[RMDB]
The record gives the reactivity of an RNA of 177 nucleotides to 2A3 and DMS. The RNA was probed in 150 mM KOAc, 10 mM MgCl2 and 150 mM bicine (pH 8.5) at 24 C. For 2A3 the reverse transcriptase was SuperScript II with manganese. The data come from the RNA Mapping Database (RMDB), libraries RFM100 and RFMREP.
RNA sequence: GGGAACGACUCGAGUAGAGUCGAAAAGUCGGCAUCUGGUGGUAACCCCUCGCAGAAAAGUCGAGAUAAGGCACUCUCUAUCAGAAUGGAUGUCUUGCUGCUAUAAUAGAUAGAGAAGGUUAUAGCAACGCGUUCUAAACUUCGGUUUAGAACGCGUAAAAGAAACAACAACAACAAC
Reactivity to 2A3 in 0.01 (KOAc 150mM, MgCl2 10mM, bicine 150mM(pH8.5), 24C), signal-to-noise 2, nucleotides 027 to 126: g070u010c040g000g000c000a030u000c000u030g020g010u000g010g170u100a100a130c000c020c020c020u000c050g160c000a030g150a090a090a020a000g030u040c010g000a010g040a020u110a100a120g080g000c020a020c040u010c000u000c000u040a000u060c010a020g210a290a060u180g020g030a090u000g050u010c000u100u110g010c070u010g000c000u000a000u000a040a010u000a030g100a050u000a030g030a000g010a000a000g010g000u000u000a080u050a000g010c020a030
Reactivity to DMS in 0.01 (KOAc 150mM, MgCl2 10mM, bicine 150mM(pH8.5), 24C), signal-to-noise 2, nucleotides 027 to 126: g000u000c090g030g010c000a100u020c000u000g060g000u000g010g020u030a170a120c140c220c000c000u020c030g000c020a020g010a040a060a120a070g030u010c040g010a050g000a130u070a070a100g000g040c080a080c000u000c040u000c000u000a000u010c000a060g010a100a180u020g030g000a070u050g000u010c000u010u050g010c170u010g010c000u000a000u010a010a000u000a010g000a020u030a000g020a000g000a000a020g000g040u000u000a020u000a000g000c050a090